An RNA of 207 nucleotides, treated with 2A3 and DMS and read out base by base. For DMS the reverse transcriptase was MarathonRT.

RNA sequence: GGGAACGACUCGAGUAGAGUCGAAAAAUAUCUAGAGGAUGCCACAAAGGAAGGCUAUUGGGGAGGCACUGAUGAAGCCGAGAUGUUAGCCAGUGCACUUAAUGUGACCAUAGUGAUAUGGAAUGUUAACACAGACAUGAAAGUCUUAGAUGUUCAAAUACUUUUACUACUUCGGUAGUAAAAGUAUAAAAGAAACAACAACAACAAC
Reactivity to 2A3 in 0.01 (KOAc 150mM, MgCl2 10mM, bicine 150mM(pH8.5), 24C), signal-to-noise 5, nucleotides 027 to 156: a010u080a040u020c020u070a030g000a000g090g030a030u050g050c030c030a070c080a100a070a030g070g020a070a020g020g000c010u050a050u110u140g000g020g000g010a020g030g000c020a010c060u070g030a090u090g040a070a020g020c010c030g050a030g000a040u060g020u090u010a000g030c000c010a010g010u030g040c030a020c080u040u080a100a030u170g050u060g080a090c010c010a020u020a030g080u090g040a070u030a020u060g010g030a050a030u080g000u060u050a040a010c030a000c010a050g020a020c010a010u140g130a160a020a030g000u000c000u020u050a100g010a110u050g030u060u050c020a060a080
Reactivity to DMS in 0.01 (KOAc 150mM, MgCl2 10mM, bicine 150mM(pH8.5), 24C), signal-to-noise 3, nucleotides 027 to 156: a080u000a070u010c020u000a060g030a080g000g010a090u000g020c020c030a150c030a060a080a090g000g020a100a100g010g000c070u000a100u000u000g040g010g000g000a120g020g000c010a070c050u000g000a070u000g010a110a120g020c040c060g010a130g010a080u000g000u020u000a160g020c020c040a090g030u000g020c040a080c070u010u000a030a050u020g010u010g020a190c010c000a030u010a010g020u010g000a260u000a030u000g010g010a170a070u000g030u010u000a030a010c060a030c050a060g010a070c020a130u000g000a080a060a130g010u000c020u010u000a090g000a150u000g000u000u000c070a060a140
For 2A3, 3,752 sequencing reads were counted.